Structure probing data (DMS and 2A3) for a 177-nucleotide construct.
RNA sequence: GGGAACGACUCGAGUAGAGUCGAAAACAUCAGUCGUUCGCGACUGAUGAAAGGUGCAAGCGCUGCACGAAAAAGUCGAUCGAAUACCGAUCGACAAGCGCUAAAGAUAGGCCUUCGGGCCUAUCAAGACAGAGUUACUGUUCGCAGUAACUCUGUCAAAAGAAACAACAACAACAAC
Reactivity to DMS in 0.01 (KOAc 150mM, MgCl2 10mM, bicine 150mM(pH8.5), 24C), signal-to-noise 3, nucleotides 027 to 126: c000a010u000c000a000g000u000c000g010u000u000c220g020c000g000a020c000u000g000a010u000g010a020a080a050g000g000u010g010c000a100a060g000c000g000c000u000g000c000a010c010g000a060a060a080a070a090g010u000c000g000a010u000c000g020a230a170u010a120c160c000g000a000u000c000g010a010c000a000a010g000c000g010c010u000a090a100a150g000a020u000a000g020g010c000c000u000u010c200g040g000g010c010c000u000a000u000c000a100a110
Reactivity to 2A3 in 0.01 (KOAc 150mM, MgCl2 10mM, bicine 150mM(pH8.5), 24C), signal-to-noise 3, nucleotides 027 to 126: c000a000u000c000a000g010u000c000g030u060u100c180g010c000g090a000c010u010g000a000u000g010a030a010a000g150g000u000g000c030a080a030g010c010g000c000u000g040c010a000c000g100a180a090a010a000a010g000u000c000g000a010u010c020g010a050a030u110a300c100c010g000a000u000c010g000a000c000a000a000g000c010g000c000u010a050a010a000g000a000u000a000g000g000c000c020u040u050c260g070g000g000c000c000u010a000u000c000a010a000
The RNA was probed in 150 mM KOAc, 10 mM MgCl2 and 150 mM bicine (pH 8.5) at 24 C. DMS adducts were read by reverse transcription with MarathonRT. Reactivities are given for positions 27 through 126. The DMS profile rests on 3,058 reads.